[RMDB]
RNA sequence: GGGAACGACUCGAGUAGAGUCGAAAAACACCCAAAUUCAAAUUGGUGUUAGGGGAGCUGGGGCCUUUCAAAAGAGAGCUUUGUAGAGGCAUUCUUUUUGACUACUUUUCUCUAGCGUGCCAUUUUAUUGAUCCCUUGAAUUCGUUCAAGGGAUCAAAAAAGAAACAACAACAACAAC
Reactivity to 2A3 in 0.01 (KOAc 150mM, MgCl2 10mM, bicine 150mM(pH8.5), 24C), signal-to-noise 3, nucleotides 027 to 126: a000c050a070c000c010c000a040a040a010u230u190c040a010a050a120u070u070g000g030u030g020u060u050a010g000g020g030g000a000g030c070u060g070g010g060g000c020c010u040u050u050c030a060a060a030a000g070a010g010a010g000c000u040u070u190g200u160a090g010a030g060g000c010a050u090u040c000u010u100u020u030u070g040a030c000u100a110c000u120u030u100u020c020u020c000u020a000g000c000g020u020g020c000c010a030u010u000u010u070a150
Reactivity to DMS in 0.01 (KOAc 150mM, MgCl2 10mM, bicine 150mM(pH8.5), 24C), signal-to-noise 2, nucleotides 027 to 126: a040c120a100c020c000c000a050a120a060u030u050c170a030a040a090u040u020g010g000u020g000u000u000a010g000g000g010g010a030g000c100u040g010g000g010g020c180c050u000u020u010c050a030a020a030a040g000a070g000a080g020c000u000u010u020g010u040a060g000a060g000g020c000a040u010u010c010u000u000u000u000u000g000a050c160u000a060c040u000u020u010u020c000u030c020u000a040g000c030g030u010g000c020c010a040u000u020u000u000a120
Structure probing data (2A3 and DMS) for a 177-nucleotide construct.
For DMS, 2,481 sequencing reads were counted.
2A3 adducts were read by reverse transcription with SuperScript II with manganese.
The RNA was probed in 150 mM KOAc, 10 mM MgCl2 and 150 mM bicine (pH 8.5) at 24 C.